[RMDB]
RNA sequence: GGGAACGACUCGAGUAGAGUCGAAAAAUCGCGCAUACUACGGUAUGCGCGCAAUCAGAAAUCGGGAAUGAUGUUCUCCCCUGGGAUUCCAAAACCGCUGUUUCGCUGAUGACGUCUGCUUUUUUAAUCACCACCGUUUGGUUCGCCAAACGGUGAACUUUGUGUCUGUGUUCGCACAGACACAAAGAAAAGAAACAACAACAACAAC
Reactivity to 2A3 in 0.01 (KOAc 150mM, MgCl2 10mM, bicine 150mM(pH8.5), 24C), signal-to-noise 1, nucleotides 027 to 156: a000u060c000g030c000g020c000a010u000a010c000u000a010c150g150g000u010a000u010g000c000g000c000g000c000a000a190u120c050a010g170a040a140a010u130c080g010g010g000a020a080u090g060a030u040g050u050u010c020u040c000c000c000c000u030g040g010g070a120u170u000c030c000a110a080a050a020c060c050g000c020u020g040u080u040u030c050g000c030u030g020a030u020g030a040c050g030u020c040u020g040c030u110u110u050u000u060u130a140a090u040c060a010c170c000a000c020c010g000u000u000u000g010g040u010u050c150g070c080c000a000a000a000c000g000g000u000g000a000a000
Chemical mapping of a 207-nucleotide RNA with 2A3.
Values cover nucleotides 27 to 156.
For 2A3 the reverse transcriptase was SuperScript II with manganese.
High 2A3 reactivity points to a flexible backbone, as in loops and unpaired stretches.
The reactions ran in a buffer of 150 mM KOAc, 10 mM MgCl2 and 150 mM bicine (pH 8.5), at 24 C.
The data come from the RNA Mapping Database (RMDB), library M2RFPK.